RNA sequence: GGGAACGACUCGAGUAGAGUCGAAAAAUAGGUUAUCAGGUAAGUUACCACUGUGGGCACUGAAGCUUAAUCUUAUUGGGGAACUCUGAGAUCCAGUGGAAAACAUACUCCUCAGAGAUAUCCUAUCUCGGUAGAUGUUUUUCGAAACAUCUACCGAAAAAGAAACAACAACAACAAC
Reactivity to 2A3 in 0.01 (KOAc 150mM, MgCl2 10mM, bicine 150mM(pH8.5), 24C), signal-to-noise 2, nucleotides 027 to 126: a000u050a020g020g000u010u030a110u170c020a030g030g020u200a170a050g030u050u030a070c010c000a040c030u000g000u250g060g000g000c000a050c080u050g030a050a000g000c010u080u030a030a030u050c040u090u140a160u140u190g040g000g000g030a010a070c000u000c000u010g010a020g020a040u090c040c050a010g010u030g020g000a160a130a000a030c050a030u110a080c000u060c040c020u030c000a010g000a020g010a070u010a070u110c000c010u040a090u100c050
Reactivity to DMS in 0.01 (KOAc 150mM, MgCl2 10mM, bicine 150mM(pH8.5), 24C), signal-to-noise 2, nucleotides 027 to 126: a090u020a050g000g020u000u000a110u000c030a020g000g020u000a060a080g000u000u000a170c030c000a070c070u000g000u000g020g010g030c040a100c030u010g030a060a080g020c020u020u010a040a090u000c050u000u000a110u000u020g000g000g010g020a160a130c010u000c000u000g000a010g000a090u000c100c050a030g020u000g000g000a190a060a110a130c110a040u020a070c110u010c160c000u000c030a020g000a070g000a050u000a070u000c010c000u000a050u000c140
Conditions: 150 mM KOAc, 10 mM MgCl2 and 150 mM bicine (pH 8.5), 24 C. This 177-nucleotide RNA was probed chemically with 2A3 and DMS. For DMS the reverse transcriptase was MarathonRT. The data come from the RNA Mapping Database (RMDB), library OK2TST. Values cover nucleotides 27 to 126.